The data come from the RNA Mapping Database (RMDB), library M2RFPK. This 207-nucleotide RNA was probed chemically with 2A3 and DMS.

[RMDB]
RNA sequence: GGGAACGACUCGAGUAGAGUCGAAAAAAAGACGCGGUUGCCGAUCGGUAUGGAUUCCACCGUGACGGCUCAAUCACACAAGUGCCAACGAUAACGAGGCGCUCGCUAUUGCUGCGUAACUGACGGCUAGAUACAGCCAGGUUCGCCUGGCUGUAAAACCAAUGUUAGUAUUCGUACUAACAUUGGUAAAAGAAACAACAACAACAAC
Reactivity to 2A3 in 0.01 (KOAc 150mM, MgCl2 10mM, bicine 150mM(pH8.5), 24C), signal-to-noise 5, nucleotides 027 to 156: a000a000a000g110a010c030g010c020g010g020u100u070g010c010c010g020a070u030c010g000g030u100a080u130g070g130a200u270u020c030c020a010c010c010g020u030g100a110c030g030g000c010u020c040a040a080u100c010a020c020a020c000a120a030g020u010g020c000c010a110a080c100g070a100u110a230a040c070g010a060g030g000c030g000c020u040c030g030c030u050a070u120u190g020c020u020g000c000g020u030a070a080c050u060g060a050c060g040g000c030u040a010g020a120u050a050c000a000g000c010c000a010g010g020u030u030c100g060c060c000u020g000g000c010u010g000u010a000a000a000
Reactivity to DMS in 0.01 (KOAc 150mM, MgCl2 10mM, bicine 150mM(pH8.5), 24C), signal-to-noise 3, nucleotides 027 to 156: a060a090a040g000a040c040g020c000g020g000u000u000g010c030c020g000a100u000c020g030g020u010a190u010g030g000a220u000u000c040c050a090c010c010g030u000g020a300c120g000g020c030u000c070a100a060u000c040a100c040a070c080a100a060g020u000g010c010c000a040a130c050g010a110u000a100a090c030g000a200g020g010c050g020c010u000c030g050c020u000a040u000u000g000c000u000g010c040g030u010a090a090c040u000g000a060c060g010g030c030u020a080g010a290u000a030c010a010g000c000c000a020g010g010u000u000c300g000c000c000u000g000g000c010u000g010u000a000a020a090
DMS adducts were read by reverse transcription with MarathonRT. The 2A3 profile rests on 5,027 reads.